[RMDB]
RNA sequence: GGGAACGACUCGAGUAGAGUCGAAAAACGACUCAGGUUACGACCUGAGUCGAAGAUGAGAUACCUGUUCCUUUGUCCAGAUCCCAUUUUGAGGUAUCAACGGAACAAUUAAUUCCUCCUAAUCCAAGGGUCAGAGGUGUUUCGACACCUCUGACCCAAAAGAAACAACAACAACAAC
Reactivity to 2A3 in 0.01 (KOAc 150mM, MgCl2 10mM, bicine 150mM(pH8.5), 24C), signal-to-noise 1, nucleotides 027 to 126: a010c060g010a000c000u000c000a010g000g070u020u000a030c090g060a000c080c000u000g000a000g000u000c000g000a000a000g030a040u110g030a020g000a040u120a120c020c060u000g020u020u000c000c000u000u110u110g020u000c010c010a000g120a060u080c000c000c000a060u220u240u090u260g280a300g020g000u020a030u160c030a000a000c000g060g000a150a000c000a000a000u080u130a010a020u100u170c000c000u010c040c000u020a120a090u110c000c000a040a060
The record gives the reactivity of an RNA of 177 nucleotides to 2A3. For 2A3, 331 sequencing reads were counted. For 2A3 the reverse transcriptase was SuperScript II with manganese. The reactions ran in a buffer of 150 mM KOAc, 10 mM MgCl2 and 150 mM bicine (pH 8.5), at 24 C.